[RMDB]
RNA sequence: GGGAACGACUCGAGUAGAGUCGAAAAGAUAUGGAGACUGGCGAACGAUAAGCUAGCAUCGGAAACGAUGUAUAGCUUUUGACGUUCGCAGUCUCCUAAGUCAAACUGCCGGCUUCGGCCGGCAGAACCAUCUUCAUUUGUUCGCAAAUGAAGAUGGAAAAGAAACAACAACAACAAC
Reactivity to 2A3 in 0.01 (KOAc 150mM, MgCl2 10mM, bicine 150mM(pH8.5), 24C), signal-to-noise 4, nucleotides 027 to 126: g000a000u030a020u090g000g010a010g010a000c020u090g290g300c010g000a010a010c020g090a160u060a300a010g000c010u020a010g000c000a000u010c000g010g020a100a020a000c030g010a000u000g010u030a300u020a160g000c000u060u010u020u080g080a030c010g010u020u000c000g000c000a010g000u000c000u010c000c000u000a000a010g000u000c010a020a030a090c000u000g000c000c020g000g030c010u090u170c300g190g000c000c000g010g040c030a000g000a000a000
Reactivity to DMS in 0.01 (KOAc 150mM, MgCl2 10mM, bicine 150mM(pH8.5), 24C), signal-to-noise 3, nucleotides 027 to 126: g000a030u000a260u010g010g000a000g010a010c010u000g040g040c000g000a000a010c000g030a160u010a030a020g020c000u000a010g000c000a000u000c000g010g000a090a100a140c010g000a010u000g010u000a110u010a010g020c000u000u000u010u000g020a190c110g020u000u000c000g020c000a000g000u000c010u000c000c000u010a000a070g000u000c020a120a180a300c010u000g010c000c010g010g000c000u000u010c250g040g010c000c000g000g000c020a000g010a030a160
This 177-nucleotide RNA was probed chemically with 2A3 and DMS.